The record gives the reactivity of an RNA of 177 nucleotides to 2A3 and DMS.
For DMS, 1,193 sequencing reads were counted.
DMS adducts were read by reverse transcription with MarathonRT.
RNA sequence: GGGAACGACUCGAGUAGAGUCGAAAACUAAAGUCCAGAGAUUUUAGGUGACCUGCUUAAGGUGCCACAGCAAGUGCAAGAUAGUUUUUUUUCUCUUUUACUGAACAUCCACAUGUAAGCUGGGUUAGCUAAUGAGUGCAUUCGUGCACUCAUUAGCAAAAGAAACAACAACAACAAC
Reactivity to 2A3 in 0.01 (KOAc 150mM, MgCl2 10mM, bicine 150mM(pH8.5), 24C), signal-to-noise 1, nucleotides 027 to 126: c030u020a070a000a000g020u050c030c060a040g090a040g020a170u000u070u090u000a050g070g020u040g030a040c010c000u020g010c030u260u160a050a030g000g030u000g070c000c030a080c010a030g000c020a120a020g000u040g010c010a040a020g020a070u060a070g060u010u020u020u010u020u000u180u030c100u000c000u010u110u000u160a110c060u100g010a050a000c000a030u040c040c000a020c010a040u140g040u300a070a040g010c070u000g000g050g050u020u080a030
Reactivity to DMS in 0.01 (KOAc 150mM, MgCl2 10mM, bicine 150mM(pH8.5), 24C), signal-to-noise 1, nucleotides 027 to 126: c000u010a030a020a040g030u000c010c160a120g010a170g010a040u000u000u000u000a010g010g010u000g000a060c010c010u010g000c090u010u000a040a090g000g030u000g010c020c060a050c070a040g000c100a020a120g000u000g020c080a030a040g000a040u000a100g000u000u000u040u000u000u000u000u000c030u000c010u010u000u000u010a100c090u000g000a080a050c100a040u000c090c060a020c070a100u000g000u000a000a060g020c050u000g000g000g020u000u000a120
Values are in units of 0.01, from 0 to 300, in steps of 10. 2A3 adducts were read by reverse transcription with SuperScript II with manganese.